[RMDB]
RNA sequence: GGGAACGACUCGAGUAGAGUCGAAAACAAUGGCCAGCGAGUGGACAGCCGGGAGGUUGUGUUCUCGCUGGUGCGUGAGGAUAACCGUCCCGUGCUUUACCCUUGUCUGAGUGUCGAACAGCUAGCGGCAAUAUGGUGUAUUCGUACACCAUAUUGCAAAAGAAACAACAACAACAAC
Reactivity to DMS in 0.01 (KOAc 150mM, MgCl2 10mM, bicine 150mM(pH8.5), 24C), signal-to-noise 3, nucleotides 027 to 126: c080a090a020u060g000g000c000c010a010g020c000g000a020g000u010g000g020a030c030a000g000c010c010g000g070g010a220g010g020u000u000g020u000g000u000u000c000u000c000g000c000u010g000g020u000g000c050g010u010g000a160g010g000a080u050a060a120c120c070g000u010c010c010c060g000u020g000c030u010u020u000a090c020c020c000u010u000g000u030c040u010g000a080g010u000g000u010c040g020a080a110c080a040g010c020u000a060g000c110g020
Reactivity to 2A3 in 0.01 (KOAc 150mM, MgCl2 10mM, bicine 150mM(pH8.5), 24C), signal-to-noise 7, nucleotides 027 to 126: c050a030a100u110g070g000c000c000a000g000c000g000a000g010u060g000g080a000c000a000g000c000c000g040g130g050a130g030g020u030u000g020u050g220u040u000c010u000c000g000c000u000g010g000u000g000c000g020u040g020a080g050g020a070u050a150a070c030c000g050u050c010c000c010g010u040g000c000u110u100u180a110c000c010c000u070u140g050u080c020u090g090a070g090u050g040u090c040g010a080a030c020a040g050c030u080a010g030c050g080
Chemical mapping of a 177-nucleotide RNA with DMS and 2A3.
It was measured as part of the RMDB library OK1LIB.
For 2A3, 6,436 sequencing reads were counted.
For 2A3 the reverse transcriptase was SuperScript II with manganese.
Conditions: 150 mM KOAc, 10 mM MgCl2 and 150 mM bicine (pH 8.5), 24 C.